Structure probing data (DMS and 2A3) for a 207-nucleotide construct. The reactions ran in a buffer of 150 mM KOAc, 10 mM MgCl2 and 150 mM bicine (pH 8.5), at 24 C. DMS (dimethyl sulfate) methylates the pairing face of unpaired adenines and cytosines. Values cover nucleotides 27 to 156.
RNA sequence: GGGAACGACUCGAGUAGAGUCGAAAACGCACUCGCAGCUUAAUAACCUGCGCUGAGCCCUUCUCCCCCAGCUUGCCUGUGUCCUAGGGAAUUGGAAGGUCAUCCUUCAGAGGAUCGUGUGGAAGUCAUUACUCGUGAGUGUUCGCACUCACGAGAAGACAAAAGUAGUGUUCGCACUACUUUUGUCAAAAGAAACAACAACAACAAC
Reactivity to DMS in 0.01 (KOAc 150mM, MgCl2 10mM, bicine 150mM(pH8.5), 24C), signal-to-noise 2, nucleotides 027 to 156: c060g000c050a050c070u000c020g020c020a030g000c020u010u010a160a170u000a150a160c300c000u000g000c010g010c100u000g010a140g010c000c000c030u000u000c050u000c020c010c010c000c010a120g020c040u000u000g020c020c070u030g020u000g010u000c030c030u010a100g010g010g040a050a090u010u000g020g010a060a030g010g040u000c050a090u010c030c020u000u000c060a140g020a080g000g020a030u010c050g020u010g020u000g010g010a070a300g010u000c060a090u000u000a190c010u000c010g040u010g010a020g020u000g010u000u000c250g040c000a040c000u000c000a010c000g000a000g010a010a080
Reactivity to 2A3 in 0.01 (KOAc 150mM, MgCl2 10mM, bicine 150mM(pH8.5), 24C), signal-to-noise 3, nucleotides 027 to 156: c040g000c010a080c020u040c010g000c000a000g000c000u020u060a050a020u040a030a080c000c000u000g040c000g010c140u090g050a060g020c010c010c000u110u040c060u030c020c010c010c010c010a000g010c020u050u080g010c000c000u050g020u020g010u030c000c060u040a060g000g010g040a060a100u040u070g050g010a050a000g050g000u090c030a100u140c010c000u050u030c040a020g010a010g080g030a030u040c030g000u040g010u040g080g030a030a040g020u050c020a060u040u160a070c020u000c000g000u000g000a000g000u010g030u050u050c130g060c100a000c000u000c000a000c000g000a000g000a010a000